[RMDB]
RNA sequence: GGGAACGACUCGAGUAGAGUCGAAAACACUACCUCUCUUAAAGGCCCAAAGGUAUACUCUACAGUGUGAAAAGGAAGUCAAAGAAUAGCACAUAUAGUCCUUGUUAUGUGUUUUGCAACAUUGCAUGUUGAUAGAGAACUGUUAAUGCUAAGAAAAGCAUUAUAGGAGCUUCGGCUCCUAUAAUGCAAAAGAAACAACAACAACAAC
Reactivity to DMS in 0.01 (KOAc 150mM, MgCl2 10mM, bicine 150mM(pH8.5), 24C), signal-to-noise 1, nucleotides 027 to 156: c060a060c040u000a160c000c000u010c060u000c050u000u000a060a040a060g010g050c070c010c030a050a050a100g010g000u000a100u000a100c040u010c030u000a060c050a100g040u010g010u000g010a050a060a060a100g010g000a060a060g010u000c050a100a110a140g010a070a100u000a080g000c020a060c030a100u000a060u010a190g010u000c040c030u000u000g040u010u010a100u010g020u000g000u010u000u040u010g010c100a040a040c000a040u000u000g000c010a100u000g010u000u000g020a160u000a130g000a190g010a030a000c020u000g000u000u000a040a070u000g000c010u030a050a250g020a120a050a100a280
Reactivity to 2A3 in 0.01 (KOAc 150mM, MgCl2 10mM, bicine 150mM(pH8.5), 24C), signal-to-noise 2, nucleotides 027 to 156: c030a020c020u150a080c030c020u040c010u070c030u060u110a170a110a090g000g000c000c000c000a020a010a000g060g010u030a030u100a140c050u030c020u020a030c030a040g020u020g000u010g080a060a090a030a050g040g000a100a070g010u070c070a040a000a080g140a030a100u110a020g000c010a020c060a000u070a000u070a020g150u110c010c030u000u080g050u060u000a000u010g020u070g020u000u010u080u110g060c000a030a020c000a030u030u090g000c000a000u190g040u040u070g100a040u090a070g160a010g010a030a000c000u000g000u010u090a030a030u080g030c020u020a050a000g080a010a100a130a010